[RMDB]
An RNA of 177 nucleotides, treated with DMS and read out base by base.
Reactivities are rounded to 0.1 and cut off at 0 and 3.
DMS adducts were read by reverse transcription with MarathonRT.
For DMS, 1,223 sequencing reads were counted.

RNA sequence: GGGAACGACUCGAGUAGAGUCGAAAAGAUAUGGAUCAGAGGGAGGAGAACACUCCUACAGAGGAGCUCGGAAACGAGCUCUACCCACCUGUAGGAGUGUUGCUCCGAGGAUCUCUGAUCCUAAGUCGACAGGGAUUAGGUUCGCCUAAUCCCUGUCAAAAGAAACAACAACAACAAC
Reactivity to DMS in 0.01 (KOAc 150mM, MgCl2 10mM, bicine 150mM(pH8.5), 24C), signal-to-noise 1, nucleotides 027 to 126: g020a100u020a300u010g000g010a020u000c000a000g000a010g000g010g000a040g000g000a040g040a070a020c030a000c010u000c000c000u000a010c000a010g020a180g040g000a020g000c000u000c000g020g000a140a110a300c000g010a000g020c010u000c000u010a000c100c020c120a300c080c000u000g010u000a010g000g010a000g020u000g000u000u000g020c000u000c000c000g000a020g010g010a010u010c010u000c020u020g000a000u000c000c000u040a020a040g000u030c090